Conditions: 150 mM KOAc, 10 mM MgCl2 and 150 mM bicine (pH 8.5), 24 C. The record gives the reactivity of an RNA of 177 nucleotides to 2A3. For 2A3, 688 sequencing reads were counted. Values cover nucleotides 27 to 126. It was measured as part of the RMDB library OK2TRN.
RNA sequence: GGGAACGACUCGAGUAGAGUCGAAAAAGCACUAUUACAGCGCAUUGGUUCACUUUGACACAACGGUGGAGCAUUGAGACACCAUAGUGGACUACUGUUACAGAACAGUGAAGUACUGUGACACCAACACGCGCAUGGCAUUCGUGCCAUGCGCGUGAAAAGAAACAACAACAACAAC
Reactivity to 2A3 in 0.01 (KOAc 150mM, MgCl2 10mM, bicine 150mM(pH8.5), 24C), signal-to-noise 1, nucleotides 027 to 126: a000g000c010a000c000u040a050u240u270a020c080a070g000c020g000c050a020u000u050g000g030u030u020c000a010c000u050u040u100g160a060c040a010c020a070a110c020g020g000u020g040g030a100g060c010a100u190u270g050a010g000a020c010a030c020c000a020u100a040g020u000g080g000a000c000u000a000c000u100g020u020u060a090c050a080g220a150a080c000a020g110u150g120a140a040g020u060a010c040u000g100u010g020a010c000a020c010c020a020a000